[RMDB]
RNA sequence: GGGAACGACUCGAGUAGAGUCGAAAAAGCACCAGUAAUGAGCACAACAGCAACAAAUGUAAUCCCAGCUCCGCCAUCAAACACUGGUGUAGCUCGAAGUCCAAGCCCGACAAUCGAAGCGGGUAUCCACGCACGAAUAGCAAGUGGGAUUGCAGCCGAUAUGGGUGUCGUUCGCGACACCCAUAUCAAAAGAAACAACAACAACAAC
Reactivity to 2A3 in 0.01 (KOAc 150mM, MgCl2 10mM, bicine 150mM(pH8.5), 24C), signal-to-noise 2, nucleotides 027 to 156: a000g020c020a010c010c020a000g000u010a020a150u160g040a020g060c060a040c030a160a090c010a110g090c010a010a070c040a180a240a030u030g020u060a050a060u050c000c000c000a010g080c000u050c060c020g000c000c000a060u050c030a090a080a010c070a030c140u000g000g010u000g000u000a020g010c020u020c070g010a130a010g020u000c000c010a010a040g060c000c020c000g070a070c060a050a130u090c060g060a170a000g060c010g000g040g000u020a050u000c030c010a030c010g050c000a000c140g080a010a080u090a090g010c080a110a040g040u040g020g010g000a000u010u010g000c010a020g080c030c060
Notes:
The record gives the reactivity of an RNA of 207 nucleotides to 2A3. The RNA was probed in 150 mM KOAc, 10 mM MgCl2 and 150 mM bicine (pH 8.5) at 24 C.